RNA sequence: GGGAACGACUCGAGUAGAGUCGAAAAUCGGCGUACUGUAAAACUCCGAACUCGUCACCGUCGUAGAAGGUUGGAGUGAGGGGCGCGGGGUAAGCUUGUGUCCCGAAAGAGAAACAACUCAGACUAUCCAUAUAUCCUAGUUCGCUAGGAUAUAUGGAAAAGAAACAACAACAACAAC
Reactivity to DMS in 0.01 (KOAc 150mM, MgCl2 10mM, bicine 150mM(pH8.5), 24C), signal-to-noise 5, nucleotides 027 to 126: u020c040g000g010c020g000u020a070c110u010g000u010a060a090a130a080c020u010c010c010g000a110a100c030u010c020g010u030c090a040c030c020g000u020c060g010u020a120g010a090a070g000g010u010u010g000g000a060g010u000g000a250g000g010g000g010c140g010c110g000g010g000g020u010a040a080g010c000u000u000g000u010g000u010c010c000c010g020a030a050a080g000a070g000a090a060a120c200a080a070c050u000c030a100g010a140c080u000a090u000
Reactivity to 2A3 in 0.01 (KOAc 150mM, MgCl2 10mM, bicine 150mM(pH8.5), 24C), signal-to-noise 9, nucleotides 027 to 126: u100c020g000g000c010g020u090a050c040u100g110u230a060a100a050a050c010u000c010c000g030a040a020c020u020c030g160u080c080a020c060c010g080u090c040g040u080a060g050a240a040g090g030u080u110g060g020a060g020u020g010a040g000g000g010g000c010g000c000g000g010g000g020u130a090a050g100c000u070u100g010u010g020u040c000c010c010g010a050a100a010g050a010g030a030a110a010c070a040a050c020u020c050a020g040a100c020u070a050u040
Conditions: 150 mM KOAc, 10 mM MgCl2 and 150 mM bicine (pH 8.5), 24 C. Chemical mapping of a 177-nucleotide RNA with DMS and 2A3. Values cover nucleotides 27 to 126. The data come from the RNA Mapping Database (RMDB), libraries RFM100 and RFMREP.